[RMDB]
Chemical mapping of a 207-nucleotide RNA with DMS and 2A3. Source: RMDB library OK3TST, as collected in RNAgym. Conditions: 150 mM KOAc, 10 mM MgCl2 and 150 mM bicine (pH 8.5), 24 C. The 2A3 profile rests on 2,700 reads.
RNA sequence: GGGAACGACUCGAGUAGAGUCGAAAAGGCGCACUUUCUCCUUCAAGAUGUAGACCAACAUAUUAGCGUUGAAGCUGUACGCUUUCUCGUGCACCGCGGCGGUGUUGAGGAAGUUGAGGUUGAACUGUCCCAGGUAGGCAACGUCUGUGCCGUGCGCUGUCCGAAAAUAGUUCGCUAUUUUCGGACAAAAAGAAACAACAACAACAAC
Reactivity to DMS in 0.01 (KOAc 150mM, MgCl2 10mM, bicine 150mM(pH8.5), 24C), signal-to-noise 2, nucleotides 027 to 156: g000g000c010g010c030a040c060u000u000u010c010u000c030c010u000u010c050a090a090g020a100u000g040u000a130g000a220c030c030a030a070c060a110u000a130u000u000a140g010c070g030u000u010g020a090a150g010c000u000g030u010a120c220g000c030u000u000u010c000u020c000g020u000g000c000a030c010c020g040c130g020g020c170g040g010u020g030u000u000g010a050g000g000a040a010g000u000u000g010a110g010g020u000u000g030a060a060c100u000g000u000c000c000c000a150g010g010u000a080g010g000c040a090a070c030g020u010c050u010g020u000g020c000c060g010u000g010c010g000c050
Reactivity to 2A3 in 0.01 (KOAc 150mM, MgCl2 10mM, bicine 150mM(pH8.5), 24C), signal-to-noise 4, nucleotides 027 to 156: g040g000c000g030c000a010c010u030u060u000c040u010c020c020u050u090c050a100a070g030a220u100g070u080a030g040a080c030c030a040a050c050a050u270a150u290u220a080g090c060g040u030u050g080a140a030g020c030u030g030u120a030c040g010c000u000u000u000c020u000c000g110u170g010c000a010c000c020g110c110g250g050c210g000g020u000g010u030u100g020a010g020g010a010a000g000u070u090g030a020g000g020u040u040g010a050a040c030u060g020u080c000c000c010a020g080g060u070a030g010g000c040a140a060c070g080u090c120u120g080u090g030c000c020g010u000g030c010g000c020